RNA sequence: GGGAACGACUCGAGUAGAGUCGAAAAUGGGUUGAUGAGCGUGAAGCCUUCGCUCGGUUGGAUUUUUCUUCAUUGCUACUCUUGGCUUGCAGGAAUUCCUCAUUUGAGGCAUCGUAAUUGUUUGGUCUGCCCUUGACAAGUUGGUGUGAAGGUUGGGGAGAAUUUAUUGGUUCGCCAAUAAAUUCUCAAAAGAAACAACAACAACAAC
Reactivity to 2A3 in 0.01 (KOAc 150mM, MgCl2 10mM, bicine 150mM(pH8.5), 24C), signal-to-noise 2, nucleotides 027 to 156: u090g030g030g010u070u120g030a100u030g020a050g030c030g020u070g070a070a030g040c020c000u060u040c040g000c030u020c040g010g010u040u020g010g060a120u030u040u060u090u060c010u020u020c010a070u030u220g020c030u030a060c030u050c030u100u080g020g000c010u010u050g060c040a030g000g050a080a090u070u040c000c030u020c020a110u070u120u260g030a020g010g010c010a030u070c040g040u040a090a070u050u100g050u150u040u050g020g000u030c010u020g000c000c000c010u030u050g010a030c010a060a020g010u030u050g040g010u070g010u030g040a080a070g000g020u020u020g020g000g030
Reactivity to DMS in 0.01 (KOAc 150mM, MgCl2 10mM, bicine 150mM(pH8.5), 24C), signal-to-noise 1, nucleotides 027 to 156: u000g030g010g030u020u000g030a110u000g010a050g020c040g040u010g010a130a180g000c020c010u000u010c010g040c020u000c040g000g000u000u010g030g000a110u000u010u000u000u010c030u010u010c040a130u000u000g000c010u000a060c050u010c020u000u000g010g010c040u000u000g020c050a120g040g020a080a100u010u000c010c010u000c000a300u000u020u000g040a030g020g040c110a020u010c090g000u010a080a090u000u000g020u000u000u000g010g010u020c000u010g000c030c020c030u000u010g010a070c080a070a190g030u000u020g000g000u000g000u010g000a060a100g000g000u000u000g030g010g030
An RNA of 207 nucleotides, treated with 2A3 and DMS and read out base by base. It was measured as part of the RMDB library ARCHII. For 2A3, 1,838 sequencing reads were counted. The RNA was probed in 150 mM KOAc, 10 mM MgCl2 and 150 mM bicine (pH 8.5) at 24 C.